[RMDB]
RNA sequence: GGGAACGACUCGAGUAGAGUCGAAAAGGAGGAAAUCACACGGAGAGAAACAGACAAAUCACCUCCAGAGGACCCCUUCAGCGAACAGAAGAGUCUCUCACGCGGUAGGAGCAAGCCCAUAGCGAUACGAGCUGUACCUUCGGGUACAGCAAAAGAAACAACAACAACAAC
Reactivity to 2A3 in 0.01 (KOAc 150mM, MgCl2 10mM, bicine 150mM(pH8.5), 24C), signal-to-noise 5, nucleotides 027 to 129: g030g030a090g010g020a050a040a020u060c020a040c040a020c140g020g010a030g020a010g000a040a150a050c070a020g160a030c020a020a020a030u110c030a050c020c000u020c020c000a000g000a020g030g000a030c040c010c000c000u000u050c040a050g000c010g040a020a010c010a040g040a050a000g010a020g020u010c010u000c000u010c040a050c030g040c020g000g020u070a030g010g080a020g030c020a020a020g000c000c000c020a070u120a010g050c030g010a020u050a110c070g030a040
Reactivity to DMS in 0.01 (KOAc 150mM, MgCl2 10mM, bicine 150mM(pH8.5), 24C), signal-to-noise 6, nucleotides 027 to 129: g000g000a050g000g000a050a050a150u060c040a020c080a160c150g060g010a060g000a080g030a110a180a030c130a020g060a100c170a090a050a090u060c120a120c060c010u030c080c050a110g040a060g000g000a230c090c030c010c010u010u020c030a070g020c080g050a040a060c040a020g030a060a070g000a000g010u030c080u020c040u020c100a070c090g030c060g040g020u050a070g020g050a070g030c100a060a070g010c070c000c050a030u050a000g030c000g020a090u060a130c170g040a210
This 170-nucleotide RNA was probed chemically with 2A3 and DMS. Conditions: 150 mM KOAc, 10 mM MgCl2 and 150 mM bicine (pH 8.5), 24 C. For DMS the reverse transcriptase was MarathonRT.